Record summary: Structure probing data (2A3 and DMS) for a 177-nucleotide construct. For 2A3, 7,041 sequencing reads were counted. DMS adducts were read by reverse transcription with MarathonRT. Reactivities are given for positions 27 through 126. For 2A3 the reverse transcriptase was SuperScript II with manganese. The RNA was probed in 150 mM KOAc, 10 mM MgCl2 and 150 mM bicine (pH 8.5) at 24 C.
RNA sequence: GGGAACGACUCGAGUAGAGUCGAAAAGAUAUGGAGAUAACGGUGGAGCUGGAACUCGGAAACGAGUUCACAGCUAUGAAGCCGAUCUCCUAAGUCAAACCACAGCUUCCUUCGGGAAGCUGUGGAACAUAUAACGUCCGUUCGCGGACGUUAUAUGAAAAGAAACAACAACAACAAC
Reactivity to 2A3 in 0.01 (KOAc 150mM, MgCl2 10mM, bicine 150mM(pH8.5), 24C), signal-to-noise 2, nucleotides 027 to 126: g010a000u000a000u040g000g000a000g000a020u070a300a110c010g010g000u030g030g020a020g000c020u010g000g010a010a000c000u000c000g020g000a020a000a000c010g000a010g020u010u000c040a050c000a020g000c010u120a300u090g000a010a000g000c010c000g000a010u000c000u000c000c000u000a000a000g000u010c020a060a070a080c000c020a000c000a000g010c000u000u000c020c000u040u150c300g130g000g020a000a000g010c010u000g000u010g010g000a010a010
Reactivity to DMS in 0.01 (KOAc 150mM, MgCl2 10mM, bicine 150mM(pH8.5), 24C), signal-to-noise 3, nucleotides 027 to 126: g010a020u000a050u030g000g010a030g010a020u000a100a160c050g010g000u000g000g000a010g050c000u000g000g000a010a000c000u000c000g000g000a010a000a040c000g010a000g010u000u000c010a030c000a010g020c000u000a110u010g010a140a300g000c000c010g020a020u000c000u010c000c000u000a000a060g000u000c010a100a130a300c010c000a000c010a000g000c000u000u010c000c010u000u010c280g020g020g010a010a000g010c000u000g000u000g010g000a020a070